[RMDB]
RNA sequence: GGGAACGACUCGAGUAGAGUCGAAAAGAUAUGGAUUCAUGACAUGCGAUACUUCGGAAACGAAGUUUCGCAACAGCAUGAUCCUAAGUCAAAGCGAGGAAACGAUGUUCGCAUCGUUUCCUCGCAAGCAUAAACAAUACUUCGGUAUUGUUUAUGCAAAAGAAACAACAACAACAAC
Reactivity to DMS in 0.01 (KOAc 150mM, MgCl2 10mM, bicine 150mM(pH8.5), 24C), signal-to-noise 6, nucleotides 027 to 126: g000a040u000a300u010g010g000a020u010u010c000a000u000g000a040c070a230u010g000c000g000a010u000a020c000u000u000c000g010g000a100a070a200c000g010a010a000g010u000u000u000c000g000c000a010a030c210a160g010c010a010u000g000a030u000c000c000u000a030a150g010u000c020a090a100a140g000c010g030a020g010g010a010a010a010c000g000a000u000g000u000u010c230g010c000a010u000c000g010u000u000u000c000c000u000c000g000c010a010a030
Reactivity to 2A3 in 0.01 (KOAc 150mM, MgCl2 10mM, bicine 150mM(pH8.5), 24C), signal-to-noise 7, nucleotides 027 to 126: g020a020u090a030u140g020g010a030u210u250c020a010u020g210a300c030a070u080g000c000g000a000u000a020c000u010u010c000g020g030a060a070a030c010g000a000a010g010u010u000u000c010g000c010a010a000c010a010g040c010a000u000g000a000u000c000c000u020a160a020g060u050c040a120a090a020g000c000g010a000g000g000a010a010a000c010g000a010u010g030u130u140c300g020c130a010u000c000g000u020u000u000c000c000u000c000g010c000a000a000
An RNA of 177 nucleotides, treated with DMS and 2A3 and read out base by base. It was measured as part of the RMDB library TTRDEL. As a SHAPE reagent, 2A3 marks flexible, mostly unpaired nucleotides at the ribose 2'-OH. The reactions ran in a buffer of 150 mM KOAc, 10 mM MgCl2 and 150 mM bicine (pH 8.5), at 24 C. For DMS the reverse transcriptase was MarathonRT.